[RMDB]
RNA sequence: GGGAACGACUCGAGUAGAGUCGAAAAGAUAUGGAACGUGAACUACAGUAUGCUAGCCAUCGAUCGUACCGCUUAUCGGAAACGAUAAGCGGUACGGGAGGCUGUCAUACUGCACGUUCCUAAGUCAGUAGGCGUAUAUGUUCGCAUAUACGCCUACAAAAGAAACAACAACAACAAC
Reactivity to 2A3 in 0.01 (KOAc 150mM, MgCl2 10mM, bicine 150mM(pH8.5), 24C), signal-to-noise 1, nucleotides 027 to 126: g050a040u020a000u140g010g030a010a000c010g000u020g000a060a050c140u220a080c300a020g000u040a010u000g040c030u040a050g000c000c030a300u300c150g140a130u240c000g040u010a020c000c000g000c000u010u000a000u000c000g000g050a100a090a010c000g020a000u000a000a000g070c030g010g000u000a000c020g000g020g000a000g000g010c000u000g000u030c000a020u000a000c010u030g000c050a000c000g000u000u070c000c000u000a040a010g050u040c030a000
Reactivity to DMS in 0.01 (KOAc 150mM, MgCl2 10mM, bicine 150mM(pH8.5), 24C), signal-to-noise 1, nucleotides 027 to 126: g010a020u000a300u000g020g000a000a050c000g010u000g010a070a030c120u050a300c000a000g000u000a000u000g010c020u000a020g030c010c020a190u000c190g040a060u000c000g000u000a020c020c000g060c000u000u000a000u000c000g010g030a120a090a200c000g010a010u000a010a000g000c000g000g020u000a000c000g000g010g030a040g050g010c010u000g020u000c010a010u000a000c010u000g000c000a000c000g010u000u010c000c030u010a010a080g000u010c020a190